[RMDB]
RNA sequence: GGGAACGACUCGAGUAGAGUCGAAAAUAACCAGACGCAUUUGCAUUUGCCGCCGUACUGGUGGACACGACAUUCAUUUGCAUACAUGCAUGCAUCUGCCAGAUGCAAGCCAAAACAUCCGCGGCCAGCGUGCCAGCACUUUCGAGUGCUGGCACGCAAAAGAAACAACAACAACAAC
Reactivity to 2A3 in 0.01 (KOAc 150mM, MgCl2 10mM, bicine 150mM(pH8.5), 24C), signal-to-noise 2, nucleotides 027 to 126: u130a030a050c010c010a040g030a110c120g000c030a100u060u100u300g000c010a000u080u090u130g010c070c000g060c000c000g060u140a200c060u240g000g020u010g030g030a020c000a030c070g160a090c030a070u040u070c020a030u000u070u130g100c010a030u110a180c070a010u110g020c020a010u060g000c000a050u010c000u020g090c020c050a000g000a000u000g000c000a010a020g060c000c040a100a120a000a050c130a100u050c000c060g030c000g030g000c030c010a000